[RMDB]
RNA sequence: GGGAACGACUCGAGUAGAGUCGAAAAGCUCGUAUCUCCGAGAGGAGACGAGAAAGAGGAGGAUCUCCCUUUGCCAUCCGAGGGAACUACGUUCUCCUUCGGAUGCCCAGGUCGGACCGCGAGGAGGGGUAUUGUGAUUCUUCGGAAUCACAAUACCAAAAGAAACAACAACAACAAC
Reactivity to DMS in 0.01 (KOAc 150mM, MgCl2 10mM, bicine 150mM(pH8.5), 24C), signal-to-noise 2, nucleotides 027 to 126: g000c000u000c000g000u000a100u000c000u010c020c000g020a240g020a260g000g000a000g000a040c010g000a020g010a040a040a060g000a050g000g010a080g000g010a090u020c040u000c030c000c030u000u000u020g010c210c020a010u000c000c010g010a040g000g020g000a000a070c110u010a130c300g000u000u020c130u000c000c010u000u000c000g000g000a000u010g010c040c020c040a090g000g000u000c120g020g020a080c050c020g000c040g010a070g000g000a110g000g000
Reactivity to 2A3 in 0.01 (KOAc 150mM, MgCl2 10mM, bicine 150mM(pH8.5), 24C), signal-to-noise 1, nucleotides 027 to 126: g060c000u000c010g050u080a180u060c020u010c000c000g040a060g010a010g080g000a010g000a030c020g020a010g020a030a020a030g100a020g000g000a000g040g040a070u040c030u000c070c030c000u050u040u070g070c030c010a030u000c000c000g000a000g000g010g020a020a030c040u140a120c250g110u110u040c040u000c060c000u030u020c000g030g000a010u010g000c020c020c000a050g000g040u040c040g030g030a060c010c050g000c020g010a040g060g050a020g000g100
Chemical mapping of a 177-nucleotide RNA with DMS and 2A3.
For DMS, 1,301 sequencing reads were counted.
2A3 adducts were read by reverse transcription with SuperScript II with manganese.
DMS adducts were read by reverse transcription with MarathonRT.